[RMDB]
This 177-nucleotide RNA was probed chemically with DMS. The reactions ran in a buffer of 150 mM KOAc, 10 mM MgCl2 and 150 mM bicine (pH 8.5), at 24 C.

RNA sequence: GGGAACGACUCGAGUAGAGUCGAAAAGAUAUGGAGGGCUGCGAUGAGAGUACAUCGGAAACGAUGUGACUCGAGCAGUCCUCCUAAGUCGGGGAAGUGAAUACCGGUUCGCCGGUAUUCACUUCAAUCAUUCUGUCGACUUCGGUCGACAGAAUGAAAAAGAAACAACAACAACAAC
Reactivity to DMS in 0.01 (KOAc 150mM, MgCl2 10mM, bicine 150mM(pH8.5), 24C), signal-to-noise 1, nucleotides 027 to 126: g010a020u000a300u010g000g000a030g020g010g000c020u000g020c000g000a150u000g030a190g010a030g000u010a010c000a010u010c000g000g000a130a060a230c000g000a020u000g000u000g000a060c000u010c000g000a210g010c000a010g020u000c000c000u010c000c000u000a010a060g000u000c010g030g010g000g000a000a010g000u010g010a020a010u000a000c000c000g000g000u000u030c200g010c000c000g000g020u000a000u000u000c000a020c000u000u010c010a040a120